[RMDB]
RNA sequence: GGGAACGACUCGAGUAGAGUCGAAAAGUCCAGCGCAUCGACGAGGACGAUGAGGUCUAUCGCACCGUCGAGGAAAAAUACCGCGCCAUCGUGCGCGAUAUCCGCGCCUCGCACGAAAAGGGCCAGACGAUAGGUACGGAUUCGUCCGUACCUAUCGAAAAGAAACAACAACAACAAC
Reactivity to DMS in 0.01 (KOAc 150mM, MgCl2 10mM, bicine 150mM(pH8.5), 24C), signal-to-noise 5, nucleotides 027 to 126: g010u000c030c030a170g010c060g060c060a080u000c050g020a090c030g010a170g030g000a110c010g010a040u010g010a190g020g000u000c070u000a060u010c020g000c170a220c090c010g010u000c010g000a030g000g000a020a100a140a060a020u000a000c000c000g020c010g020c000c000a100u010c300g000u010g010c000g010c000g000a010u000a000u010c080c100g000c210g000c020c030u000c050g020c130a070c040g000a030a040a060a070g010g020g000c070c060a130g000a160
Reactivity to 2A3 in 0.01 (KOAc 150mM, MgCl2 10mM, bicine 150mM(pH8.5), 24C), signal-to-noise 4, nucleotides 027 to 126: g040u000c000c010a030g050c030g030c020a110u030c040g090a080c010g040a150g040g030a040c020g010a030u050g050a050g060g080u020c040u100a070u050c020g000c030a040c050c030g030u050c000g000a020g000g050a040a070a010a010a020u060a020c000c020g000c010g000c020c000a270u220c100g180u140g010c000g000c000g010a000u000a020u030c030c040g050c000g020c000c010u030c050g020c000a050c060g070a050a000a040a090g020g010g000c020c010a030g040a080